[RMDB]
RNA sequence: GGGAACGACUCGAGUAGAGUCGAAAACUACUCAGGAGGCUGAGACAGGAGGCUCGGUUGAGCCCAGGAGUUGGAGUUCGAGGCUACACUGAGCUGUGAUUGUGCCACCACACUCCAGCAUGGGUGGCUUCCUAGAUCCCUUCGGGGAUCUAGGAAGAAAAGAAACAACAACAACAAC
Reactivity to DMS in 0.01 (KOAc 150mM, MgCl2 10mM, bicine 150mM(pH8.5), 24C), signal-to-noise 1, nucleotides 027 to 126: c000u010a080c020u000c030a020g020g010a190g000g000c010u010g000a300g000a060c070a070g000g000a120g000g000c020u000c020g000g010u000u020g010a050g000c000c020c060a110g000g020a100g010u000u000g000g000a140g010u000u000c070g000a290g000g010c020u010a040c080a210c010u000g000a050g020c060u010g000u000g010a150u020u000g020u000g020c010c040a030c010c010a140c130a040c020u000c030c020a080g010c160a140u010g010g010g030u000g010g000